[RMDB]
RNA sequence: GGGAACGACUCGAGUAGAGUCGAAAAUUAGUACCUGCUGACUUGGUAGUAGUGCAAACACUAGUUGUAUGGCCCGCGAAGGAUGCCCAGAAGGUACCCGUAGGUAACAAGUGACACUAUGGAUCUGGCAGAGGAUAACUUUCGAGUUAUCCUCUGCAAAAGAAACAACAACAACAAC
Reactivity to 2A3 in 0.01 (KOAc 150mM, MgCl2 10mM, bicine 150mM(pH8.5), 24C), signal-to-noise 2, nucleotides 027 to 126: u100u050a000g050u010a020c000c030u020g000c010u020g030a100c010u050u110g060g000u080a100g010u000a000g020u050g090c040a020a000a000c000a000c060u060a110g040u030u050g070u120a130u110g080g000c010c000c000g030c040g000a050a030g060g000a050u140g020c010c000c010a040g030a120a020g010g020u040a010c000c000c000g010u020a010g000g010u040a050a000c020a000a300g040u000g060a020c000a000c030u000a020u020g030g040a070u040c050u100g030
Reactivity to DMS in 0.01 (KOAc 150mM, MgCl2 10mM, bicine 150mM(pH8.5), 24C), signal-to-noise 2, nucleotides 027 to 126: u020u020a070g010u030a020c010c010u010g000c010u010g010a140c060u030u000g000g000u000a030g020u020a040g010u010g010c120a060a080a120c030a050c060u030a030g000u040u000g010u030a100u000g000g010c000c070c000g000c090g000a050a040g000g010a060u000g000c010c020c030a050g020a170a070g000g020u040a070c040c000c020g050u010a020g020g000u040a020a060c000a100a070g010u030g000a090c210a040c000u000a020u000g010g000a080u000c020u000g000